[RMDB]
RNA sequence: GGGAACGACUCGAGUAGAGUCGAAAAAGCCCUGGGCUCCCCCAGUGUUGCCUGGGUCUGACUUUGCCUCAGUGAAAACUGCCUCGAAUUCUUUCUUGCACCGAUGGGCAGAUGGGCAGUGUCGGAGCAGGCUGGCUCAAUUCGUUGAGCCAGCCUGAAAAGAAACAACAACAACAAC
Reactivity to 2A3 in 0.01 (KOAc 150mM, MgCl2 10mM, bicine 150mM(pH8.5), 24C), signal-to-noise 1, nucleotides 027 to 126: a000g020c020c000c000u030g020g000g040c000u050c020c100c000c000c000a000g010u010g040u140u090g000c000c000u060g000g000g070u000c080u170g000a030c000u150u110u070g000c000c000u080c120a170g020u180g130a170a130a070a070c020u000g000c010c010u050c020g020a130a080u060u060c150u100u290u020c010u100u160g000c080a030c000c040g080a160u090g000g030g120c000a010g000a010u120g000g030g000c010a000g000u000g000u020c000g010g010a010g010